[RMDB]
RNA sequence: GGGAACGACUCGAGUAGAGUCGAAAAGAUAUGGAGCUGUAUGCGGCUGAUGACCAACUUCGGAAACGAAGUUGCAAGGCCUAUACUGGCUCCUAAGUCAAAAGGAAAGAUGUUCGCAUCUUUCCAACUGAUAUAACUACUUCGGUAGUUAUAUCAGAAAAGAAACAACAACAACAAC
Reactivity to DMS in 0.01 (KOAc 150mM, MgCl2 10mM, bicine 150mM(pH8.5), 24C), signal-to-noise 9, nucleotides 027 to 126: g010a050u000a300u010g000g000a010g020c000u000g020u000a010u000g030c300g020g010c000u010g010a070u020g000a280c300c000a010a010c000u000u000c000g020g000a110a080a220c000g010a010a000g000u000u010g000c020a050a080g010g020c000c020u000a040u000a010c010u020g040g000c000u000c000c000u000a010a080g000u000c040a080a080a160a120g000g000a010a020a020g000a010u000g010u000u020c270g020c010a010u000c000u000u000u000c000c010a050a070
Reactivity to 2A3 in 0.01 (KOAc 150mM, MgCl2 10mM, bicine 150mM(pH8.5), 24C), signal-to-noise 9, nucleotides 027 to 126: g030a010u090a060u190g000g000a000g000c010u020g070u040a010u060g160c200g100g000c020u070g040a300u110g020a040c040c010a000a000c010u000u000c010g020g020a040a070a060c010g010a010a000g010u000u000g000c010a080a140g010g000c000c010u010a010u010a020c060u070g070g000c010u000c000c000u000a050a010g030u000c040a010a040a120a130g000g000a010a000a000g000a010u030g050u100u250c300g030c140a000u000c000u000u000u020c000c000a000a000